[RMDB]
RNA sequence: GGGAACGACUCGAGUAGAGUCGAAAAUAACCCCUAUACUUGUAUAGGCGAUUAAGAAAUCUUCUGUAAAUGCUGUAAGAGGAUUACCCCUUGAGGUUUCAGCACUAGGCUGCUCUAGCGAUUAAUCACAACGAUUUGGUCUUCGGACCAAAUCGAACGUUCUAUACUCCUUCGGGAGUAUAGAACGAAAAGAAACAACAACAACAAC
Reactivity to 2A3 in 0.01 (KOAc 150mM, MgCl2 10mM, bicine 150mM(pH8.5), 24C), signal-to-noise 1, nucleotides 027 to 156: u060a010a040c000c000c000c020u040a000u000a150c080u090u150g020u100a030u010a020g060g000c050g090a090u130u000a050a070g000a150a130a050u040c030u090u010c030u100g070u160a050a120a120u070g030c040u030g060u090a020a030g000a000g000g000a000u000u000a130c000c030c030c040u000u070g080a140g120g060u050u110u160c010a000g000c010a000c040u080a020g110g000c030u030g020c010u040c090u130a010g020c030g040a010u060u170a060a070u140c090a050c040a220a170c060g000a000u010u000u010g000g000u000c000u040u070c260g020g000a000c000c000a000a000a000u000c000g000a000a020
Conditions: 150 mM KOAc, 10 mM MgCl2 and 150 mM bicine (pH 8.5), 24 C.
This 207-nucleotide RNA was probed chemically with 2A3.
Source: RMDB library M2RFPK, as collected in RNAgym.